[RMDB]
RNA sequence: GGGAACGACUCGAGUAGAGUCGAAAACUAUGUUUCGACAUAGGAGCGCCGUAGGCAGCGAUAAGAACUACCACCGUUGAAACCACUUUCGAAAGAGAGUGGUGGAGGUGAUGUUCUUUUGACGCUGCCUAAACGGGAUAGCGUGUUUCGACACGAAGACUCUAGGCUAAUUCGUUAGCCUAGAGUCAAAAGAAACAACAACAACAAC
Reactivity to 2A3 in 0.01 (KOAc 150mM, MgCl2 10mM, bicine 150mM(pH8.5), 24C), signal-to-noise 1, nucleotides 027 to 156: c000u000a000u000g020u020u170u060c180g070a000c000a010u020a030g070g000a060g080c130g020c010c010g000u000a010g000g020c000a000g000c010g030a040u010a060a020g000a000a010c000u050a040c030c040a000c000c020g140u190u020g030a010a000a000c000c000a000c000u000u010u010c020g070a160a150a120g000a000g000a000g000u000g030g000u000g000g000a000g000g000u000g000a000u030g000u000u000c020u040u060u030u080g090a040c000g000c040u000g010c010c000u000a010a000a010c000g000g030g030a100u170a120g140c090g070u080g030u020u130u070c070g010a050c010a000c100g140a060a090
Reactivity to DMS in 0.01 (KOAc 150mM, MgCl2 10mM, bicine 150mM(pH8.5), 24C), signal-to-noise 1, nucleotides 027 to 156: c020u000a080u000g020u000u000u020c260g030a150c020a020u000a000g000g000a160g070c060g000c020c010g020u000a000g000g050c000a020g010c010g020a220u000a060a060g010a040a020c010u010a020c050c000a040c000c010g010u020u020g000a300a290a040c000c020a000c000u020u000u000c000g000a220a150a270g000a060g000a010g020u000g000g060u000g010g000a100g000g050u000g000a020u000g000u000u000c000u000u000u000u000g000a200c070g000c030u010g020c010c010u010a000a030a060c000g000g030g000a080u010a080g000c060g030u000g000u010u020u010c040g010a140c050a140c020g010a060a190